RNA sequence: GGGAACGACUCGAGUAGAGUCGAAAAGAUAUGGAUUGAGGGAGCUGACAUUCGGAAACGAAUGUACAGCGAGGAUCUCACUGUCCUAAGUCAAACCCUUACACAAUCUUCGGAUUGUGUAAGGGAACAUUCGCCAUAGCUUCGGCUAUGGCGAAUGAAAAGAAACAACAACAACAAC
Reactivity to DMS in 0.01 (KOAc 150mM, MgCl2 10mM, bicine 150mM(pH8.5), 24C), signal-to-noise 1, nucleotides 027 to 126: g000a090u000a220u000g010g000a030u020u000g010a000g000g000g010a020g030c010u010g000a090c010a030u000u010c010g020g000a100a070a210c010g010a040a010u000g010u000a040c000a000g000c000g000a070g000g000a050u000c000u000c000a020c300u020g020u030c020c010u020a050a100g010u010c010a210a060a090c000c000c000u010u000a000c010a000c000a010a000u000c000u000u000c230g000g010a020u000u020g010u000g010u010a000a020g000g010g010a000a010
Reactivity to 2A3 in 0.01 (KOAc 150mM, MgCl2 10mM, bicine 150mM(pH8.5), 24C), signal-to-noise 1, nucleotides 027 to 126: g020a020u070a030u100g050g010a020u050u110g020a000g020g000g020a040g010c010u000g000a000c000a000u020u030c020g000g050a100a040a000c010g030a000a030u000g010u100a300c000a000g000c080g000a000g000g000a030u030c030u020c010a040c140u120g110u010c000c010u080a140a020g050u030c050a000a100a300c010c010c020u000u000a000c020a000c000a010a010u000c040u060u100c300g140g000a020u010u000g000u000g000u000a010a030g010g000g000a000a000